Background: This 177-nucleotide RNA was probed chemically with DMS and 2A3.
RNA sequence: GGGAACGACUCGAGUAGAGUCGAAAAAGCGAUUUCUGAGUUUUAUAUAGCUGUGUGGGGAAAAGCAAAUCUUGCCCGGAUGAUCCUCAGUGGUCUGGGGUGCAGGCUUCAAACCUGUAGCUGUCUACGAAGAAUCUAAGUUCGCUUAGAUUCUUCGAAAAGAAACAACAACAACAAC
Reactivity to DMS in 0.01 (KOAc 150mM, MgCl2 10mM, bicine 150mM(pH8.5), 24C), signal-to-noise 6, nucleotides 027 to 126: a070g010c070g020a130u000u000u000c030u000g000a140g010u000u000u000u010a070u010a100u000a060g010c010u010g010u000g020u000g010g010g010g010a190a140a040a080g020c040a070a100a100u010c100u000u000g010c010c000c010g010g010a080u000g000a040u000c010c010u000c150a080g020u010g010g010u000c010u000g010g010g000g020u000g010c170a030g010g010c020u010u010c150a040a210a180c010c010u000g010u000a040g010c020u000g010u000c100u010a120
Reactivity to 2A3 in 0.01 (KOAc 150mM, MgCl2 10mM, bicine 150mM(pH8.5), 24C), signal-to-noise 2, nucleotides 027 to 126: a000g060c060g070a070u030u100u030c010u030g000a030g020u040u090u060u000a180u030a030u090a080g020c010u000g000u010g020u230g090g020g000g010a020a100a040a050g010c040a020a120a080u060c040u040u120g010c000c000c000g000g080a070u070g000a000u010c010c010u100c100a070g040u300g300g000u030c010u040g010g000g000g040u000g000c030a020g000g060c020u090u070c090a100a050a030c000c000u030g010u010a010g010c030u020g040u010c000u040a070

DMS (dimethyl sulfate) methylates the pairing face of unpaired adenines and cytosines.